[RMDB]
RNA sequence: GGGAACGACUCGAGUAGAGUCGAAAAAACAGAUACAUUCUUCUCAGGCAAUCCAGGAUGGCAGGAGAAUAUUGACAGGGAAGUUUCAUUGGCAAGUGGCAUACUCAUCACGGAGGAUGCUGAAAACUGCUCCUUUAAACUUCGGUUUAAAGGAGCAAAAAGAAACAACAACAACAAC
Reactivity to DMS in 0.01 (KOAc 150mM, MgCl2 10mM, bicine 150mM(pH8.5), 24C), signal-to-noise 2, nucleotides 027 to 126: a030a040c100a020g020a220u020a040c230a030u030u000c030u000u000c050u040c090a030g010g020c090a060a070u010c080c010a040g000g000a070u010g000g000c060a030g010g000a070g000a140a070u010a130u000u000g000a050c050a060g000g000g000a090a090g010u010u000u000c010a090u010u060g000g010c010a050a070g000u010g020g030c060a000u020a020c060u000c000a020u020c200a060c220g020g000a000g040g010a010u000g000c050u000g000a000a030a090a070c170
Reactivity to 2A3 in 0.01 (KOAc 150mM, MgCl2 10mM, bicine 150mM(pH8.5), 24C), signal-to-noise 2, nucleotides 027 to 126: a000a000c060a040g070a070u090a040c040a010u160u080c110u020u000c000u000c000a000g000g040c000a060a100u010c000c050a090g190g000a220u230g070g050c140a080g000g050a170g010a000a060u180a070u210u160g020a000c020a020g000g000g010a010a020g000u020u110u110c250a210u000u150g060g030c070a080a000g040u050g050g080c000a000u000a020c040u000c000a070u080c030a030c230g140g000a000g040g000a000u000g000c000u000g050a030a000a000a130c070
Structure probing data (DMS and 2A3) for a 177-nucleotide construct. Source: RMDB library OK1LIB, as collected in RNAgym.